An RNA of 207 nucleotides, treated with 2A3 and read out base by base. The reactions ran in a buffer of 150 mM KOAc, 10 mM MgCl2 and 150 mM bicine (pH 8.5), at 24 C. For 2A3 the reverse transcriptase was SuperScript II with manganese.

[RMDB]
RNA sequence: GGGAACGACUCGAGUAGAGUCGAAAAGGUUUAAACAGAUGGAGAUACACAAAUGUUUGAAUCCCAGUAACAAAAAUCCUGGUAUCUCGGGUAUACAGUAGUGCAGAUACUGUAUUUUUAAUGCUCCUUAGGUUUUCCAUCUUCGGAUGGAAAACAACCAUGUCAAACGUUUCGACGUUUGACAUGGAAAAGAAACAACAACAACAAC
Reactivity to 2A3 in 0.01 (KOAc 150mM, MgCl2 10mM, bicine 150mM(pH8.5), 24C), signal-to-noise 1, nucleotides 027 to 156: g020g000u000u040u090a010a010a000c000a010g060a020u020g010g000a030g010a010u010a030c010a000c000a030a100a030u030g020u000u010u030g030a030a010u010c000c020c000a050g050u140a120a050c060a100a130a060a000a010u020c000c000u010g000g020u010a010u010c040u020c030g010g000g000u010a020u010a010c000a010g030u040a000g030u040g300c040a030g090a190u020a020c000u010g000u000a000u020u010u000u000u110a140a190u110g010c020u150c060c050u050u100a050g160g000u000u030u000u000c000c000a000u040c010u000u050c090g140g000a000u000g000g000a010a000a000a000c000a000a000